RNA sequence: GGGAACGACUCGAGUAGAGUCGAAAAUAGGGUCGCAGUUAAUGACUACCGCCUCCAGUGUACAAUGGUCUCCAAUAUGAGUAAAAACUAUCAUUUGGACUAGGUGAGAUGCCUUUGGUCCAUCGCAACUUGCAGGUAAGUUCGCUUACCUGCAAGUAAAAGAAACAACAACAACAAC
Reactivity to DMS in 0.01 (KOAc 150mM, MgCl2 10mM, bicine 150mM(pH8.5), 24C), signal-to-noise 2, nucleotides 027 to 126: u000a100g010g020g040u000c150g020c060a060g000u010u000a040a060u010g010a060c020u000a060c030c300g000c010c000u010c010c010a080g010u000g010u010a050c250a090a150u000g020g020u010c010u000c000c010a020a050u010a010u020g000a050g010u020a050a020a050a020a020c060u000a010u000c010a090u000u000u000g010g010a020c000u000a020g010g000u000g010a090g000a140u010g000c010c000u000u010u000g010g000u010c000c000a090u000c130g020c190a070
Reactivity to 2A3 in 0.01 (KOAc 150mM, MgCl2 10mM, bicine 150mM(pH8.5), 24C), signal-to-noise 1, nucleotides 027 to 126: u140a040g040g020g000u010c020g020c010a030g000u020u060a050a020u050g010a020c030u050a040c000c010g040c000c000u000c010c010a040g050u090g030u140a060c080a090a150u050g020g010u000c000u000c010c010a030a000u060a040u120g030a020g040u170a010a070a020a000a000c060u060a060u090c010a140u110u100u090g010g000a010c010u020a010g010g000u030g050a080g010a020u090g020c040c000u090u030u060g040g000u000c000c000a010u050c040g010c000a010